[RMDB]
RNA sequence: GGGAACGACUCGAGUAGAGUCGAAAAGCACCAGUUCCUCUGUGGGCUUGCCCUCAAGAACGCUUCGGUGUUGAGGCCCUGUCCGCCGCUGCACUGCACACCUCUCUCCGCGCCGCUAGCCGAGCGGACUACGGGCGGUUUCCCUAUUCUCUCACGCCAUGUGCCUUCAGUUCGCUGAAGGCACAUGAAAAGAAACAACAACAACAAC
Reactivity to 2A3 in 0.01 (KOAc 150mM, MgCl2 10mM, bicine 150mM(pH8.5), 24C), signal-to-noise 1, nucleotides 027 to 156: g010c040a010c010c000a000g010u010u020c000c000u000c000u000g000u050g020g000g030c170u220u120g180c040c000c010u030c020a040a070g000a010a010c030g030c200u090u150c180g030g010u000g010u080u040g050a070g110g000c000c000c000u000g000u010c010c000g000c000c030g000c010u030g000c020a060c140u100g010c030a070c030a130c070c040u110c030u040c050u120c290c070g070c020g070c080c020g000c090u160a020g050c110c000g050a000g010c010g000g000a000c020u020a010c000g000g010g000c010g010g000u030u040u020c010c000c000u020a180u190u180c070u000c050u050c000a010c040g050c060